An RNA of 177 nucleotides, treated with DMS and 2A3 and read out base by base.

[RMDB]
RNA sequence: GGGAACGACUCGAGUAGAGUCGAAAAGCUCGUACAGGUGUUCUUCGCGGGGGUAGCGGUAGAGUCCGCCGUCGGGCCCCUGGAGAUAGUACCAUGUCUCGUCGGUCCGUACCACCGAGGAGCGGUGCUAGAUGAGGCAGUUCGCUGCCUCAUCUAGAAAAGAAACAACAACAACAAC
Reactivity to DMS in 0.01 (KOAc 150mM, MgCl2 10mM, bicine 150mM(pH8.5), 24C), signal-to-noise 1, nucleotides 027 to 126: g010c030u000c010g040u020a080c130a120g010g000u000g010u000u010c040u000u010c050g020c060g040g020g010g010g000u000a150g010c030g010g000u010a080g010a070g030u010c040c060g010c020c090g010u000c070g000g000g000c000c000c020c020u010g000g000a130g000a070u000a050g000u000a050c030c050a140u010g030u000c020u000c020g000u010c030g020g010u000c100c080g000u000a100c070c140a070c030c010g000a060g000g030a060g010c060g000g010u000g000
Reactivity to 2A3 in 0.01 (KOAc 150mM, MgCl2 10mM, bicine 150mM(pH8.5), 24C), signal-to-noise 1, nucleotides 027 to 126: g000c000u010c050g030u110a020c030a080g090g000u050g030u090u100c000u020u040c020g020c040g090g020g020g010g050u040a060g010c010g050g030u060a170g030a020g290u040c140c120g010c020c000g070u060c030g030g300g000c090c010c000c010u050g060g000a060g000a010u080a050g030u010a040c060c040a180u080g070u060c020u010c000g210u010c030g030g000u050c040c000g060u080a100c020c030a010c020c020g010a070g090g020a010g020c020g040g010u050g020
It was measured as part of the RMDB library OK2TRN.
The reactions ran in a buffer of 150 mM KOAc, 10 mM MgCl2 and 150 mM bicine (pH 8.5), at 24 C.
For DMS the reverse transcriptase was MarathonRT.
2A3 is a SHAPE reagent: it acylates the 2'-hydroxyl of flexible nucleotides of all four kinds.
For DMS, 1,413 sequencing reads were counted.